[RMDB]
RNA sequence: GGGAACGACUCGAGUAGAGUCGAAAAGUUGCUUUGCCUAAUCAUGUCGCUUAUUGUGCAAGUAAGGCUGGUGUGAUUGGUCUUACUCAAGUAUUAUCAUUGGAAUGGGGGCCAUCCAAUAUUAAUGCGUAUAGCUUGAGUUCGCUCAAGCUAUACGAAAAGAAACAACAACAACAAC
Reactivity to DMS in 0.01 (KOAc 150mM, MgCl2 10mM, bicine 150mM(pH8.5), 24C), signal-to-noise 5, nucleotides 027 to 126: g010u010u010g020c100u010u000u000g010c090c020u010a060a080u010c040a030u000g010u000c030g010c030u000u000a040u000u000g020u010g030c170a120a030g000u000a030a020g010g020c010u010g030g020u000g030u020g010a070u010u000g010g010u010c030u000u000a070c060u000c090a070a120g020u020a040u000u000a040u000c140a040u000u010g000g000a040a090u000g010g020g010g000g010c050c120a090u000c020c020a020a030u000a100u010u000a050a040u000g010
Reactivity to 2A3 in 0.01 (KOAc 150mM, MgCl2 10mM, bicine 150mM(pH8.5), 24C), signal-to-noise 4, nucleotides 027 to 126: g120u120u070g040c040u040u060u120g010c010c020u040a030a030u040c030a060u040g050u080c010g000c010u040u030a050u090u200g050u080g070c120a040a040g010u010a000a030g080g090c110u140g040g090u110g030u050g070a080u010u100g000g020u000c010u020u040a040c020u000c040a070a040g030u020a050u130u040a030u020c100a030u020u030g020g020a090a090u070g090g000g040g000g000c010c010a020u000c010c000a030a000u050a030u100u120a090a060u110g030